RNA sequence: GGGAACGACUCGAGUAGAGUCGAAAAGAUAUGGACCUCUGGGCGUGUGGUGUGCAAGCCCGACGGAUCGGAAACGAUCCCAAGGGUGAUGACCACACGUAACAUCACGCCCAGAGGUCCUAAGUCAGUUCAAUUAUUCGUUCGCGAAUAAUUGAACAAAAGAAACAACAACAACAAC
Reactivity to DMS in 0.01 (KOAc 150mM, MgCl2 10mM, bicine 150mM(pH8.5), 24C), signal-to-noise 2, nucleotides 027 to 126: g020a010u000a040u020g010g010a060c000c020u000c000u000g000g050g020c000g060u000g000u000g010g030u010g000u000g040c000a020a010g010c000c000c000g000a300c300g000g000a000u010c000g000g000a050a000a070c000g020a000u000c010c010c000a060a300g000g010g050u000g030a050u020g020a080c300c000a010c020a000c000g010u010a060a250c300a190u000c010a010c000g000c010c000c010a000g000a000g010g000u000c000c010u000a000a030g000u000c000a080
An RNA of 177 nucleotides, treated with DMS and read out base by base. Conditions: 150 mM KOAc, 10 mM MgCl2 and 150 mM bicine (pH 8.5), 24 C. Reactivities are given for positions 27 through 126.